[RMDB]
RNA sequence: GGGAACGACUCGAGUAGAGUCGAAAAGAUAUGGAAUUGUGGUGAAUGGCUUGGAUUUACUCUCGGAAACGAGAGUUGUCAGCCACACCCAAUUCCUAAGUCAAACUCACAUGUUCGCAUGUGAGAACAUAGCGUUGUGGUUCGCCACAACGCUAUGAAAAGAAACAACAACAACAAC
Reactivity to 2A3 in 0.01 (KOAc 150mM, MgCl2 10mM, bicine 150mM(pH8.5), 24C), signal-to-noise 3, nucleotides 027 to 126: g020a010u100a070u190g000g020a000a020u030u070g080u300g080g000u030g110a300a300u060g060g050c060u160u240g150g020a060u300u280u220a030c000u030c000u000c000g020g070a050a130a080c010g020a020g010a010g000u000u030g000u010c000a020g010c000c010a000c000a000c000c000c000a020a000u010u000c000c000u000a030a010g010u000c010a050a040a150c000u000c000a000c000a010u040g070u110u120c300g040c190a000u000g000u010g010a000g000a010a010
Reactivity to DMS in 0.01 (KOAc 150mM, MgCl2 10mM, bicine 150mM(pH8.5), 24C), signal-to-noise 2, nucleotides 027 to 126: g010a060u010a300u010g010g000a010a000u000u000g040u040g040g010u000g000a160a170u000g010g040c020u000u010g020g020a020u010u020u000a000c000u000c000u000c000g000g000a070a150a200c000g000a020g030a010g000u010u000g020u000c000a070g000c000c010a020c010a000c000c000c000a000a000u000u000c000c000u010a000a080g000u000c020a060a110a250c010u000c000a000c000a000u000g000u020u010c200g040c010a010u000g010u000g000a010g000a080a170
Conditions: 150 mM KOAc, 10 mM MgCl2 and 150 mM bicine (pH 8.5), 24 C. This 177-nucleotide RNA was probed chemically with 2A3 and DMS. The DMS profile rests on 2,511 reads. The data come from the RNA Mapping Database (RMDB), library TTRDES. DMS adducts were read by reverse transcription with MarathonRT. 2A3 adducts were read by reverse transcription with SuperScript II with manganese.